Structure probing data (DMS and 2A3) for a 177-nucleotide construct.
The data come from the RNA Mapping Database (RMDB), library OK2TRN.
[RMDB]
RNA sequence: GGGAACGACUCGAGUAGAGUCGAAAAGAGCAGCUUAAGAGCCAGACCGUGGAGGAGGGAAGCAAGGUUAUCUUCCGCUGUCGAGUGGAUGGCAAGCCCACUCCCACCGCCCGCUGGAUGCGUGGCGGUCACAGACCGGAUUCGUCCGGUCUGUGACAAAAGAAACAACAACAACAAC
Reactivity to DMS in 0.01 (KOAc 150mM, MgCl2 10mM, bicine 150mM(pH8.5), 24C), signal-to-noise 9, nucleotides 027 to 126: g010a100g010c050a100g010c040u000u010a090a180g010a150g010c020c030a130g000a060c060c060g010u010g010g010a070g010g010a060g010g000g010a080a090g020c160a080a070g010g010u010u000a120u000c030u000u000c020c020g000c020u000g010u000c110g010a090g030u000g010g000a080u000g010g010c080a070a110g000c050c010c020a100c100u000c000c010c010a140c070c010g010c000c000c020g010c010u000g010g010a120u010g010c020g000u010g030g020c010g010
Reactivity to 2A3 in 0.01 (KOAc 150mM, MgCl2 10mM, bicine 150mM(pH8.5), 24C), signal-to-noise 7, nucleotides 027 to 126: g030a010g020c040a000g000c020u140u110a110a020g050a020g120c010c010a020g010a040c000c040g020u070g020g010a020g010g010a020g030g060g060a090a010g080c090a070a060g110g030u160u100a060u080c010u030u000c010c010g000c030u030g040u110c060g030a040g050u050g040g030a060u070g060g000c020a040a020g010c000c000c000a020c040u010c020c000c000a030c000c010g010c010c000c000g000c030u110g240g140a110u210g010c010g070u090g010g000c010g000
Values cover nucleotides 27 to 126.